The record gives the reactivity of an RNA of 177 nucleotides to 2A3 and DMS.

[RMDB]
RNA sequence: GGGAACGACUCGAGUAGAGUCGAAAAGAUAUGGAUGCACUAGGGAGAACCGUCUCGGAAACGAGACGAGUUCGACGAUCUAGGCAUCCUAAGUCAAAAGCUCAUCAAUCUUCGGAUUGAUGAGCAAUCUAAGCGUAAUCUUCGGAUUACGCUUAGAAAAAGAAACAACAACAACAAC
Reactivity to 2A3 in 0.01 (KOAc 150mM, MgCl2 10mM, bicine 150mM(pH8.5), 24C), signal-to-noise 1, nucleotides 027 to 126: g000a010u010a010u040g000g000a000u000g000c130a190c300u000a000g040g000g000a030g000a000a000c000c010g020u000c000u000c000g000g000a010a000a000c000g000a000g010a010c020g000a010g020u000u000c010g000a040c020g010a000u000c000u010a000g000g030c000a000u000c000c000u000a000a000g000u000c000a050a050a000a190g000c000u010c000a010u000c000a010a000u000c010u050u160c300g230g000a000u000u000g000a000u000g010a000g000c000a000a000
Reactivity to DMS in 0.01 (KOAc 150mM, MgCl2 10mM, bicine 150mM(pH8.5), 24C), signal-to-noise 2, nucleotides 027 to 126: g000a000u000a010u010g010g000a010u000g000c010a150c000u000a000g000g000g000a000g010a010a000c010c000g010u000c000u000c000g020g000a010a000a010c000g000a010g010a000c000g000a020g000u000u000c000g000a100c300g000a010u010c000u010a000g000g000c000a010u010c000c000u000a000a040g000u000c010a120a100a130a140g000c000u000c010a010u000c000a020a010u000c000u000u020c200g030g000a020u000u000g000a000u010g000a010g020c000a020a020
2A3 adducts were read by reverse transcription with SuperScript II with manganese. DMS adducts were read by reverse transcription with MarathonRT.